Chemical mapping of a 177-nucleotide RNA with DMS and 2A3.
2A3 adducts were read by reverse transcription with SuperScript II with manganese.
The reactions ran in a buffer of 150 mM KOAc, 10 mM MgCl2 and 150 mM bicine (pH 8.5), at 24 C.
It was measured as part of the RMDB libraries RFM100 and RFMREP.

RNA sequence: GGGAACGACUCGAGUAGAGUCGAAAAACCAUAAUGCCGCCCGAUUUCGGUCAAUUCCCCGCCCUUGUGGACUGCGAUCAAGUCUCUACUGCGUUGACCCGGUCCUUUCGGCACCGGAUUCCUCAGCUCCAUACGCGUGAUUCGUCACGCGUAUGGAAAAAGAAACAACAACAACAAC
Reactivity to DMS in 0.01 (KOAc 150mM, MgCl2 10mM, bicine 150mM(pH8.5), 24C), signal-to-noise 2, nucleotides 027 to 126: a070c020c030a170u000a130a090u010g000c060c020g000c090c000c030g000a120u000u020u000c050g010g000u000c040a070a140u020u010c000c020c010c040g000c060c060c040u010u010g000u040g010g050a090c010u000g000c060g000a060u010c090a060a050g000u000c020u000c010u000a110c040u000g010c170g000u000u000g000a120c150c030c010g000g000u010c000c000u010u040u030c060g010g010c150a080c030c010g030g000a160u020u000c030c000u000c080a100g020c170
Reactivity to 2A3 in 0.01 (KOAc 150mM, MgCl2 10mM, bicine 150mM(pH8.5), 24C), signal-to-noise 3, nucleotides 027 to 126: a010c020c010a020u140a080a030u150g030c010c000g010c020c000c000g080a070u000u140u030c040g000g060u050c020a030a060u070u070c000c000c000c010g080c020c030c000u050u030g060u020g110g000a050c010u020g030c040g040a040u050c040a060a070g070u010c010u020c010u030a080c040u060g060c010g090u070u060g010a060c000c000c030g000g000u020c000c000u090u200u210c110g010g000c060a020c020c000g020g010a020u050u040c000c040u070c010a050g020c010